Record summary:
This 177-nucleotide RNA was probed chemically with 2A3. The 2A3 profile rests on 395 reads. As a SHAPE reagent, 2A3 marks flexible, mostly unpaired nucleotides at the ribose 2'-OH. It was measured as part of the RMDB library OK1LIB. Values cover nucleotides 27 to 126.

RNA sequence: GGGAACGACUCGAGUAGAGUCGAAAAUUUCAUCAAGUCUAAGUGGGAUGGUUUGCCUUUUCUUGUCAGAACACUCCUUAAGUACUACGCUUUUUAUAGAUGUACUGCCUUCGCCUUUGACACCAUCACGCCCUCGAGAUUUCGAUCUCGAGGGCGUAAAAGAAACAACAACAACAAC
Reactivity to 2A3 in 0.01 (KOAc 150mM, MgCl2 10mM, bicine 150mM(pH8.5), 24C), signal-to-noise 1, nucleotides 027 to 126: u000u000u030c000a110u060c030a050a060g000u000c110u060a010a000g030u090g100g000g040a110u000g000g000u030u020u200g000c000c000u010u160u000u150c000u070u280g110u120c010a000g000a160a030c000a020c020u070c030c030u020u020a020a020g000u090a130c030u090a060c000g000c220u230u010u000u010u240a250u020a050g060a030u000g080u030a030c000u020g000c000c000u020u040c000g050c000c000u000u050u110g060a020c070a060c030c000a010u070c030